[RMDB]
RNA sequence: GGGAACGACUCGAGUAGAGUCGAAAACAAGAUCGGUCUUCGGACCGAUCUUGAAAAACCGUAGGCUGUUACAUCGAGUCGUACUUCGAAAGAGGUAUACGACGAUGAGAUGUACAGCCUAAACGGAAAAAGGGAAAGCAGUUCGCUGCUUUCCCAACACUGACCAACGAUUCGUCGUUGGUCAGUGAAAAGAAACAACAACAACAAC
Reactivity to 2A3 in 0.01 (KOAc 150mM, MgCl2 10mM, bicine 150mM(pH8.5), 24C), signal-to-noise 1, nucleotides 027 to 156: c020a010a010g000a000u000c000g000g090u010c060u020u170c300g060g010a010c040c000g000a010u000c000u000u000g000a010a010a000a020a000c000c000g000u000a000g020g020c030u020g210u300u180a010c000a000u000c010g000a000g010u000c000g010u010a010c000u020u000c010g030a110a020a050g020a000g030g040u120a200u040a190c020g010a040c020g120a200u280g170a100g000a160u010g010u010a000c000a000g260c010c000u010a010a010a000c010g010g070a000a000a070a050a180g010g010g000a010a000a000g020c000a010g010u070u240c200g060c300u000g000c000u000u000u000c000c000c000a020a000
An RNA of 207 nucleotides, treated with 2A3 and read out base by base. The reactions ran in a buffer of 150 mM KOAc, 10 mM MgCl2 and 150 mM bicine (pH 8.5), at 24 C.